[RMDB]
RNA sequence: GGGAACGACUCGAGUAGAGUCGAAAAAGCUUAGCGGUACGCCGCUACGCAAGGCGCAUUUGAACUGUAUUGUACGCCUUGCAUAAAGCAAAAGUACUAAAAAAACGUGCCGUUACGACGGCACGAAAAAACAUCCAUUGGUUCGCCAAUGGAUGAAGUUUACGAUGUGCUUCGGCACAUCGUAAACAAAAGAAACAACAACAACAAC
Reactivity to 2A3 in 0.01 (KOAc 150mM, MgCl2 10mM, bicine 150mM(pH8.5), 24C), signal-to-noise 2, nucleotides 027 to 156: a000g020c030u030u020a000g000c000g000g020u050a030c210g010c040c000g030c020u040a040c090g010c020a000a000g000g000c020g000c040a080u060u100u300g180a240a130c080u060g060u300a090u110u100g040u090a060c020g000c010c000u000u020g000c000a010u140a020a020a020g040c020a000a000a000a100g090u070a080c170u210a010a050a080a000a000a000a000c000g000u000g000c000c000g000u010u020a050c250g020a010c010g070g000c060a040c030g020a000a000a000a000a000a020c010a000u000c000c000a000u000u000g030g000u000u000c070g030c150c000a000a000u000g000g010a000u000g000a000a000
An RNA of 207 nucleotides, treated with 2A3 and read out base by base. Conditions: 150 mM KOAc, 10 mM MgCl2 and 150 mM bicine (pH 8.5), 24 C. Reactivities are rounded to 0.1 and cut off at 0 and 3. The data come from the RNA Mapping Database (RMDB), library M2RFPK. For 2A3 the reverse transcriptase was SuperScript II with manganese.